Structure probing data (DMS) for a 177-nucleotide construct.
The data come from the RNA Mapping Database (RMDB), library TTRDEL.
The RNA was probed in 150 mM KOAc, 10 mM MgCl2 and 150 mM bicine (pH 8.5) at 24 C.
For DMS, 535 sequencing reads were counted.
Reactivities are given for positions 27 through 126.
RNA sequence: GGGAACGACUCGAGUAGAGUCGAAAAGAUAUGGACGUAACAGCAACAGCGUACGGGACUCGGAAACGAGUCUUACGACAUGCUGGAGAAGUCCUAAGUCAAAGAGCCGGUCUUCGGACCGGCUCAAUCCCACUAUUGGGUUCGCCCAAUAGUGGGAAAAAGAAACAACAACAACAAC
Reactivity to DMS in 0.01 (KOAc 150mM, MgCl2 10mM, bicine 150mM(pH8.5), 24C), signal-to-noise 1, nucleotides 027 to 126: g030a130u000a300u010g000g030a000c010g010u010a090a300c000a000g020c000a030a160c270a230g000c000g040u000a100c300g010g000g000a030c010u000c000g010g000a040a090a190c000g000a000g020u000c000u000u000a020c020g000a050c070a260u000g000c000u000g020g010a030g020a090a200g000u010c010c010u000a000a130g000u000c020a040a180a170g000a040g080c020c000g000g000u000c000u000u020c150g010g020a030c010c000g020g010c000u000c000a010a050